Notes: An RNA of 177 nucleotides, treated with DMS and 2A3 and read out base by base. The data come from the RNA Mapping Database (RMDB), library OK2TRN. High DMS reactivity at an A or C suggests that its Watson-Crick edge is free. The reactions ran in a buffer of 150 mM KOAc, 10 mM MgCl2 and 150 mM bicine (pH 8.5), at 24 C.
[RMDB]
RNA sequence: GGGAACGACUCGAGUAGAGUCGAAAAGCGGAUGGGCGAUGAGUUGCUGGCCAAAGCCGCCGAGCUGCGCUACGGUGACAUCACCGACCUGUCCAACUACGGUGGUGCGCUGAUCGACCAGCGCGCCCCUUCCCUAGGCGUUCGCGCCUAGGGAAGGAAAAGAAACAACAACAACAAC
Reactivity to DMS in 0.01 (KOAc 150mM, MgCl2 10mM, bicine 150mM(pH8.5), 24C), signal-to-noise 3, nucleotides 027 to 126: g010c300g000g010a020u000g020g010g010c010g020a020u000g030a050g030u000u000g000c020u000g010g050c220c060a060a230a070g020c000c010g000c130c180g000a150g040c010u000g000c300g010c050u020a040c020g000g000u000g000a020c040a100u000c000a020c000c000g000a120c030c000u000g010u000c000c000a100a130c140u000a080c140g010g000u000g030g010u000g000c000g010c000u000g010a080u010c170g000a120c120c000a020g000c000g010c000g000c010c020
Reactivity to 2A3 in 0.01 (KOAc 150mM, MgCl2 10mM, bicine 150mM(pH8.5), 24C), signal-to-noise 4, nucleotides 027 to 126: g090c070g000g000a020u020g010g040g000c020g020a030u010g020a000g020u030u040g030c050u030g060g030c060c000a120a060a030g020c080c070g100c120c060g060a130g000c080u080g020c030g000c080u130a120c050g000g010u020g000a010c010a240u050c010a010c020c010g220a300c010c000u010g000u000c010c020a040a040c050u200a090c090g160g040u140g030g000u010g000c000g000c000u010g010a140u170c090g090a120c040c030a000g000c010g010c000g010c010c010